[RMDB]
RNA sequence: GGGAACGACUCGAGUAGAGUCGAAAAGAUAUGGACUAAGAGCGAUAAGAUAUUGGUCGGAAACGACCACUAUCUUUUGACGCUCGAAGUCCUAAGUCAAACAAUAGGAAGUUCGCUUCCUAUUGAAUCGGAUGUAAGAGUUCGCUCUUACAUCCGAAAAAGAAACAACAACAACAAC
Reactivity to 2A3 in 0.01 (KOAc 150mM, MgCl2 10mM, bicine 150mM(pH8.5), 24C), signal-to-noise 1, nucleotides 027 to 126: g030a010u070a030u110g010g000a010c000u020a060a000g000a000g000c000g040a060u050a230a070g010a000u020a030u020u020g000g040u010c010g010g010a050a060a050c010g000a000c010c010a000c010u010a040u000c000u020u110u030u070g040a010c020g010c000u000c000g000a000a000g000u000c010c000u010a050a010g010u010c060a120a040a120c010a020a020u010a020g020g020a030a000g030u030u170c220g130c120u040u000c000c000u000a000u000u010g010a020a100
Reactivity to DMS in 0.01 (KOAc 150mM, MgCl2 10mM, bicine 150mM(pH8.5), 24C), signal-to-noise 2, nucleotides 027 to 126: g000a040u000a300u020g000g000a030c000u000a100a300g000a000g030c000g020a200u000a010a000g010a000u010a010u000u010g000g020u000c000g050g000a040a050a130c000g010a030c010c010a010c120u000a000u000c000u000u000u010u000g000a190c070g000c000u000c000g000a180a050g000u000c000c000u000a010a070g000u000c050a100a090a300c000a010a000u000a020g000g000a040a000g050u000u010c270g000c010u010u000c000c010u000a000u010u000g010a080a100
Chemical mapping of a 177-nucleotide RNA with 2A3 and DMS.